[RMDB]
RNA sequence: GGGAACGACUCGAGUAGAGUCGAAAAGGCUUCUGGAAUGAGCAUGCUACUGAAUCACCAAAGGCAUGUCCCACCUCUCUGGAGAUCUUUCUGUCCUUUUCUGGGGAAUGGGGUCGAUGGGAGCAACCGGCUAGGUUAUUUUCGAAUAACCUAGCCGAAAAGAAACAACAACAACAAC
Reactivity to DMS in 0.01 (KOAc 150mM, MgCl2 10mM, bicine 150mM(pH8.5), 24C), signal-to-noise 2, nucleotides 027 to 126: g000g000c010u000u000c030u000g000g040a130a070u010g010a090g000c040a040u010g000c100u000a090c230u000g000a090a230u000c120a090c100c010a030a060a160g000g000c020a010u010g000u000c010c000c000a100c290c040u000c000u020c020u000g010g000a270g000a010u000c030u000u000u000c150u010g020u010c030c020u000u000u020u010c170u000g020g000g010g000a050a080u000g000g020g010g000u000c060g020a220u010g000g000g010a030g000c150a070a090c180
Reactivity to 2A3 in 0.01 (KOAc 150mM, MgCl2 10mM, bicine 150mM(pH8.5), 24C), signal-to-noise 3, nucleotides 027 to 126: g070g040c020u050u000c010u100g090g040a300a150u130g000a060g040c030a040u080g060c010u090a120c040u120g030a100a070u140c060a080c110c000a030a040a000g050g000c010a030u060g040u040c010c010c000a030c020c000u010c000u010c040u080g060g060a090g020a050u030c000u040u200u050c080u150g170u170c020c020u110u110u170u240c150u220g080g010g000g040a010a030u120g050g010g000g010u030c030g010a030u080g010g010g000a010g000c000a030a020c060